The data come from the RNA Mapping Database (RMDB), library OK3TST.
The record gives the reactivity of an RNA of 207 nucleotides to 2A3 and DMS.
Values cover nucleotides 27 to 156.
2A3 adducts were read by reverse transcription with SuperScript II with manganese.
For 2A3, 2,464 sequencing reads were counted.
RNA sequence: GGGAACGACUCGAGUAGAGUCGAAAAAUGUGUUCAAAUGUGGGUGUGCCGGGAGCAGUGGCUCACACCUAUAAUCCCAGCUUUUAGGAGGCCAAGGUGGGAGGAUUGCUUGAGACCAGUAGUUCAAGACCAGCCUGGUCAGCAUAAUGAGACACCGGAUAUGACGACAAUUCGUUGUCGUCAUAUCAAAAGAAACAACAACAACAAC
Reactivity to 2A3 in 0.01 (KOAc 150mM, MgCl2 10mM, bicine 150mM(pH8.5), 24C), signal-to-noise 3, nucleotides 027 to 156: a000u120g030u040g040u060u050c030a070a080a070u090g020u060g030g030g000u020g010u050g060c050c030g040g040g010a080g020c110a060g040u110g070g000c010u030c040a000c010a010c000c000u060a040u050a070a020u020c030c030c000a040g030c040u040u060u010u100a080g020g030a050g000g030c020c030a070a050g050g000u010g030g000g010a030g010g030a070u070u040g010c000u080u100g050a070g020a090c010c010a030g010u050a030g000u030u110c080a130a030g050a090c010c030a010g060c010c000u010g000g000u000c010a000g010c000a020u140a230a080u110g040a020g010a040c020a020c050c040g000
Reactivity to DMS in 0.01 (KOAc 150mM, MgCl2 10mM, bicine 150mM(pH8.5), 24C), signal-to-noise 2, nucleotides 027 to 156: a100u010g010u030g010u020u000c050a110a030a150u000g030u010g010g000g000u000g010u000g020c020c010g050g020g000a110g010c020a090g020u000g000g000c010u010c040a060c020a040c000c020u010a100u000a120a100u010c010c000c040a190g000c190u000u000u000u000a090g010g000a070g020g040c060c070a060a060g010g040u020g000g020g020a120g020g000a080u010u000g060c050u000u000g000a270g020a050c040c020a040g030u000a090g010u000u000c090a040a140g010a110c000c030a100g000c100c010u010g010g010u000c000a150g010c050a080u020a020a080u010g020a140g010a080c050a070c030c070g020